[RMDB]
Structure probing data (2A3 and DMS) for a 177-nucleotide construct. 2A3 is a SHAPE reagent: it acylates the 2'-hydroxyl of flexible nucleotides of all four kinds. The RNA was probed in 150 mM KOAc, 10 mM MgCl2 and 150 mM bicine (pH 8.5) at 24 C. Source: RMDB library TTRDES, as collected in RNAgym. For DMS, 1,142 sequencing reads were counted.
RNA sequence: GGGAACGACUCGAGUAGAGUCGAAAAGAUAUGGACAGCGAGACCCGUCGCCGGUGAAAUACCUAGCUCGGAAACGAGCUAGGGAGACGCUCGUCUGUCCUAAGUCAAAGGCUAGUUCGCUAGCCAACUCAGAUGUGAAGUUCGCUUCACAUCUGAGAAAAGAAACAACAACAACAAC
Reactivity to 2A3 in 0.01 (KOAc 150mM, MgCl2 10mM, bicine 150mM(pH8.5), 24C), signal-to-noise 2, nucleotides 027 to 126: g000a000u020a010u060g000g000a000c000a010g020c000g030a010g010a080c000c010c030g130u300c210g140c230c040g040g060u160g060a210a230a130u170a020c000c030u010a000g010c000u020c000g030g000a000a010a020c010g000a020g030c000u010a000g010g000g000a000g040a010c120g140c000u060c010g300u170c120u000g010u000c000c000u000a010a000g000u020c000a110a030a090g040g000c000u030a000g030u060u120c290g050c210u000a020g000c000c010a010a050
Reactivity to DMS in 0.01 (KOAc 150mM, MgCl2 10mM, bicine 150mM(pH8.5), 24C), signal-to-noise 1, nucleotides 027 to 126: g010a000u010a010u010g020g000a000c020a020g010c010g000a050g000a110c060c050c020g000u020c300g000c300c030g000g000u000g000a060a150a120u000a150c000c000u010a000g000c000u000c010g000g020a000a020a040c020g000a000g010c000u000a010g000g000g010a090g040a160c270g000c020u000c010g000u010c000u000g040u000c000c000u000a000a070g010u000c000a100a130a150g000g030c020u000a010g010u000u040c290g040c020u000a000g010c000c020a030a110